[RMDB]
RNA sequence: GGGAACGACUCGAGUAGAGUCGAAAAGAUCACUGAUCAUGGCGAUCGAUCUCUAGCAUGCACACUAGUACUGUGACUGUGAUCGUGAUCAGUACGUACUGCGUACUAGAGCUAGCAUGCAUGACUACGUAGUAUGGAUUUUCGAAUCCAUACUACGAAAAGAAACAACAACAACAAC
Reactivity to DMS in 0.01 (KOAc 150mM, MgCl2 10mM, bicine 150mM(pH8.5), 24C), signal-to-noise 9, nucleotides 027 to 126: g000a020u000c010a050c040u000g010a100u010c140a080u010g010g020c060g010a030u000c020g010a130u000c020u000c020u000a080g010c010a020u000g010c030a060c090a140c050u000a030g000u000a040c070u000g020u000g010a130c070u000g010u000g000a140u010c180g010u010g010a100u000c020a030g010u000a020c050g010u010a100c180u010g010c070g010u000a010c010u000a030g010a120g010c120u000a060g010c060a080u000g000c010a060u000g000a100c080u000a130
Reactivity to 2A3 in 0.01 (KOAc 150mM, MgCl2 10mM, bicine 150mM(pH8.5), 24C), signal-to-noise 9, nucleotides 027 to 126: g010a010u030c020a010c100u120g070a140u160c090a150u220g110g000c070g020a020u020c020g010a080u010c040u000c000u020a030g010c010a020u020g010c020a020c010a010c040u020a010g020u030a020c030u130g100u150g160a040c030u050g040u070g110a130u120c090g050u060g020a040u030c010a000g020u020a020c040g020u050a090c080u170g070c040g020u000a000c000u010a020g020a020g040c020u030a030g010c010a020u040g000c010a020u070g050a050c060u110a040